Notes: Chemical mapping of a 177-nucleotide RNA with DMS and 2A3. 2A3 adducts were read by reverse transcription with SuperScript II with manganese. The reactions ran in a buffer of 150 mM KOAc, 10 mM MgCl2 and 150 mM bicine (pH 8.5), at 24 C.

RNA sequence: GGGAACGACUCGAGUAGAGUCGAAAAGGUGUUCGUGAUCGCGCUCGGCCUCGGGAUGGCCUCGAAGAUCGCGCUCGCCGUCGUGAUGGUGUUCUUCGUCGUGUUCGGCAACGCGUUCCAGGGCGUAAAUUAGGGUGAUAUUCGUAUCACCCUAAUUAAAAGAAACAACAACAACAAC
Reactivity to DMS in 0.01 (KOAc 150mM, MgCl2 10mM, bicine 150mM(pH8.5), 24C), signal-to-noise 9, nucleotides 027 to 126: g010g020u000g010u000u000c070g040u000g000a080u000c070g010c060g010c080u000c110g010g010c030c020u000c110g010g010g020a140u010g010g010c010c010u000c080g010a090a150g000a030u000c010g010c010g010c040u000c140g030c010c010g010u000c030g000u000g000a040u010g010g010u010g010u010u010c180u000u000c020g020u000c020g010u000g000u010u000c020g020g010c020a050a050c050g010c010g010u000u000c020c030a160g000g000g000c050g010u000a050
Reactivity to 2A3 in 0.01 (KOAc 150mM, MgCl2 10mM, bicine 150mM(pH8.5), 24C), signal-to-noise 8, nucleotides 027 to 126: g080g010u050g010u070u080c070g040u070g050a110u060c040g000c000g010c060u030c060g030g000c000c030u050c080g070g050g050a090u110g080g000c000c010u030c030g040a050a020g010a020u020c010g000c000g000c010u050c060g000c010c000g000u010c010g010u030g020a030u040g010g110u100g110u260u100c080u110u070c020g020u000c010g010u020g060u140u040c010g010g000c010a030a010c010g000c000g020u030u000c020c020a030g030g010g000c030g030u050a030